[RMDB]
Structure probing data (DMS and 2A3) for a 207-nucleotide construct. Reactivities are rounded to 0.1 and cut off at 0 and 3. DMS (dimethyl sulfate) methylates the pairing face of unpaired adenines and cytosines. The data come from the RNA Mapping Database (RMDB), library OK3TST. The reactions ran in a buffer of 150 mM KOAc, 10 mM MgCl2 and 150 mM bicine (pH 8.5), at 24 C. For 2A3 the reverse transcriptase was SuperScript II with manganese. Values cover nucleotides 27 to 156. For DMS, 2,839 sequencing reads were counted. DMS adducts were read by reverse transcription with MarathonRT.
RNA sequence: GGGAACGACUCGAGUAGAGUCGAAAAAGUUGCUCCUGGGCAGCUGUGCCUGCUGGGGAUUGGAGGCCCAGGCGUAUGGUCAGGACAGUGCAUGCCCAGCCCUGGGUCCUGAGAAAGGAGGUGCCGCCACCCUGUGUGCAGCUCAGCAAAGGAGGUCUGAUUGUCUUCUUUUCGAAGAAGACAAUCAAAAAGAAACAACAACAACAAC
Reactivity to DMS in 0.01 (KOAc 150mM, MgCl2 10mM, bicine 150mM(pH8.5), 24C), signal-to-noise 1, nucleotides 027 to 156: a090g040u000u010g000c010u000c000c000u010g030g030g120c080a140g010c000u010g020u000g030c040c030u040g000c060u010g020g020g010g020a160u010u010g030g020a080g000g010c020c020c010a030g010g020c130g050u000a110u010g020g010u000c010a110g030g000a070c020a150g010u010g020c130a130u000g030c090c010c000a160g010c080c010c000u040g020g030g010u010c000c010u000g060a100g010a120a160a080g000g000a090g010g000u000g000c060c030g010c020c010a130c010c010c000u000g010u010g020u010g040c020a060g000c000u010c020a100g020c020a050a130a080g000g000a170g040g000u000c100
Reactivity to 2A3 in 0.01 (KOAc 150mM, MgCl2 10mM, bicine 150mM(pH8.5), 24C), signal-to-noise 2, nucleotides 027 to 156: a000g040u030u040g030c000u000c010c000u020g000g080g000c060a060g020c000u000g000u010g030c020c010u080g040c060u070g040g020g000g050a100u060u150g030g000a040g000g040c000c000c000a010g060g010c060g040u150a300u080g010g000u050c050a030g070g060a170c090a130g120u110g180c050a090u050g030c000c000c010a000g000c000c000c010u000g000g000g000u020c010c010u040g030a050g120a050a070a020g040g020a030g020g040u120g020c010c050g000c010c010a010c020c000c000u070g080u020g040u060g080c000a000g000c000u020c040a030g020c040a000a040a050g020g010a010g000g060u050c080